[RMDB]
RNA sequence: GGGAACGACUCGAGUAGAGUCGAAAAUACAAAUACCAAUCUUCCGGAACGGAAACGAAUCUGACACACUGGUGGUCUGGCAAAGCAGUGGUCACAGUGGCUGGCCAGGGACGAGAGCCGAGAGCCGUGACCGGAAAGUAUUCGUACUUUCCGGUCAAAAAGAAACAACAACAACAAC
Reactivity to DMS in 0.01 (KOAc 150mM, MgCl2 10mM, bicine 150mM(pH8.5), 24C), signal-to-noise 3, nucleotides 027 to 126: u030a100c270a090a070a040u000a110c080c060a090a070u050c140u020u000c060c030g020g000a170a110c070g000g000a070a170a080c140g010a060a040u020c070u020g010a110c050a070c040a030c060u010g010g020u000g010g030u000c010u010g010g030c060a040a060a090g010c050a050g060u000g000g040u020c030a010c060a190g000u020g000g000c030u000g000g000c020c000a060g030g000g000a180c070g020a070g020a090g000c020c010g000a080g010a140g030c010c030g000
Reactivity to 2A3 in 0.01 (KOAc 150mM, MgCl2 10mM, bicine 150mM(pH8.5), 24C), signal-to-noise 3, nucleotides 027 to 126: u140a000c040a010a090a000u160a130c000c010a020a160u000c080u080u020c060c000g060g030a150a070c060g030g000a010a100a040c010g020a020a050u020c020u060g040a000c000a000c000a020c100u030g080g050u050g060g010u050c020u010g070g040c060a080a070a090g030c050a060g010u040g080g030u030c030a010c010a070g100u120g080g010c030u020g080g050c040c010a040g010g020g030a010c040g020a000g020a000g050c000c030g150a130g010a000g080c000c000g020